This 207-nucleotide RNA was probed chemically with 2A3.
For 2A3, 589 sequencing reads were counted.
The reactions ran in a buffer of 150 mM KOAc, 10 mM MgCl2 and 150 mM bicine (pH 8.5), at 24 C.
RNA sequence: GGGAACGACUCGAGUAGAGUCGAAAAGCUACCAUCCUAGCAUUCUUUAAUAACUCUGCCGUUUUGCAGAUGGCUCUGACAUGUCGCGUGCGCAUCCCAGUUCCGCACUAUCGAGGAAGAACUCGCCGUAGGAGAGGCAUGGCGGGCAGCGGCCGCCCCUCGUGUAUGUCUUCGGACAUACACGAGGAAAAGAAACAACAACAACAAC
Reactivity to 2A3 in 0.01 (KOAc 150mM, MgCl2 10mM, bicine 150mM(pH8.5), 24C), signal-to-noise 1, nucleotides 027 to 156: g050c030u050a040c010c020a060u040c000c020u010a020g010c040a120u150u070c060u070u190u070a220a080u150a120a060c050u090c040u100g060c050c030g050u020u020u140u300g010c050a010g020a020u040g020g030c030u050c070u090g060a070c040a060u150g020u060c020g000c010g070u060g000c050g000c020a110u090c040c000c030a010g030u120u040c000c010g000c030a030c080u020a060u200c120g070a020g100g000a050a060g010a060a030c000u020c070g080c030c010g120u100a020g000g140a050g010a010g000g020c070a070u040g010g020c030g020g000g000c020a030g050c070g000g030c000c000g000c000c020
Values cover nucleotides 27 to 156.